RNA sequence: GGGAACGACUCGAGUAGAGUCGAAAAGUAAUAGAUAAGUGGAUGACGAGAAAGGGUGCGCUGAUAUCCACUACGAAUGCUAGCAGUAAAACGAAUAGCGCUCCGUAUACAACUAGCAACAAAAGGAUAAGGUAUCGUGAUGUCAAUCACAUUGCGAACGCCCUCCAUUAUUCGUAAUGGAGGGCGUAAAAGAAACAACAACAACAAC
Reactivity to DMS in 0.01 (KOAc 150mM, MgCl2 10mM, bicine 150mM(pH8.5), 24C), signal-to-noise 1, nucleotides 027 to 156: g010u000a080a240u000a100g020a170u000a100a080g030u000g000g030a080u020g000a180c110g030a140g000a120a130a080g020g000g010u000g000c010g010c020u000g120a160u000a070u000c020c000a040c000u040a160c060g010a080a150u000g000c020u010a040g030c000a170g080u000a070a080a270a040c020g010a010a230u000a100g000c060g000c020u000c070c020g000u000a080u000a050c020a040a060c030u000a030g000c000a070a070c100a040a110a060a000g010g010a070u000a060a170g030g020u000a070u000c000g050u000g010a020u020g000u000c020a190a170u010c190a100c010a000u000u000g020c010g000a040
Reactivity to 2A3 in 0.01 (KOAc 150mM, MgCl2 10mM, bicine 150mM(pH8.5), 24C), signal-to-noise 1, nucleotides 027 to 156: g000u040a060a090u040a080g080a050u030a020a090g050u000g020g000a000u000g100a000c090g030a030g100a090a070a000g070g020g000u070g000c050g050c010u010g010a010u000a000u150c010c010a020c040u010a040c110g030a040a050u090g000c000u010a000g000c010a020g040u110a050a080a000a020c020g040a110a120u010a070g000c030g000c020u000c000c020g000u010a070u010a050c000a030a050c020u000a000g000c000a020a010c010a040a100a000a020g050g010a010u050a150a020g040g030u130a070u100c000g010u000g000a000u000g000u050c020a000a000u150c000a000c000a010u000u030g010c030g000a000

Source information:
This 207-nucleotide RNA was probed chemically with DMS and 2A3. For DMS the reverse transcriptase was MarathonRT. It was measured as part of the RMDB library OK3TST. For DMS, 1,297 sequencing reads were counted. Reactivities are given for positions 27 through 156.